[RMDB]
RNA sequence: GGGAACGACUCGAGUAGAGUCGAAAAUGUAUGUGAGCUCCUGUUUGUAUACGAAACAACCAAGUUCAUCUUUAGAAAUCAUCUGAUUGUCUCAAUAUUUAUUUACUUAUUUGUGUCCCUCUAAAGCCACAGUAAGGAGAACUUCGGUGAAGUCCUAGAUUUACUCGGGUUUCGACCCGAGUAAAUCAAAAGAAACAACAACAACAAC
Reactivity to 2A3 in 0.01 (KOAc 150mM, MgCl2 10mM, bicine 150mM(pH8.5), 24C), signal-to-noise 1, nucleotides 027 to 156: u150g000u040a010u040g060u030g040a010g000c010u090c210c070u230g050u040u050u070g000u000a010u000a040c050g040a080a040a070c000a010a000c030c000a000a080g000u010u050c050a180u000c090u070u030u010a060g030a010a060a020u000c060a030u060c060u130g010a050u050u070g090u060c010u010c040a020a050u090a090u120u160u060a050u130u120u080a210c030u110u020a090u140u210u000g010u000g040u000c020c050c000u130c040u170a240a090a000g000c000c010a000c000a000g020u000a010a010g000g030a080g010a010a000c010u030u020c060g000g000u040g010a040a000g010u000c000c010u050a040

Chemical mapping of a 207-nucleotide RNA with 2A3. It was measured as part of the RMDB library OK3TST. For 2A3 the reverse transcriptase was SuperScript II with manganese.